[RMDB]
RNA sequence: GGGAACGACUCGAGUAGAGUCGAAAAGCAAAAUAAGCGAGCAAAGGUAAAAGCCGCAAGAAAGAAUAAAGAAAGAGCGGCAAGAGGAGAAGCUCGCAAAAACCACCAGAAAAAUAACGAUGGUUUCGACCGUCGAAAAGAAACAACAACAACAAC
Reactivity to DMS in 0.01 (KOAc 150mM, MgCl2 10mM, bicine 150mM(pH8.5), 24C), signal-to-noise 5, nucleotides 027 to 135: g010c170a070a070a070a080u020a080a130g010c010g010a000g030c010a030a170a100g000g010u010a020a080a160a080g000c000c000g000c000a050a090g020a110a070a090g010a140a170u020a070a070a070g000a090a120a080g010a090g010c010g020g000c000a040a050g000a150g010g000a100g000a150a120g020c000u000c000g030c000a000a010a050a010a020c050c010a070c070c070a050g010a020a070a050a040a050u040a050a110c070g000a030u000g000g000u000u010u020c110g010a000c030c030g010u000c040g000a050
Reactivity to 2A3 in 0.01 (KOAc 150mM, MgCl2 10mM, bicine 150mM(pH8.5), 24C), signal-to-noise 7, nucleotides 027 to 135: g040c010a010a030a040a150u160a150a010g010c000g020a000g000c030a090a070a040g030g010u100a080a020a010a020g000c000c010g000c040a010a020g050a050a120a010g090a060a100u290a120a090a000g090a030a040a010g070a010g010c000g000g010c030a020a010g070a030g090g110a100g020a130a020g030c000u020c020g010c010a000a010a000a000a010c010c010a010c010c030a020g140a040a100a010a000a000u140a050a000c010g010a010u010g010g000u010u020u070c090g040a010c000c000g000u010c000g030a050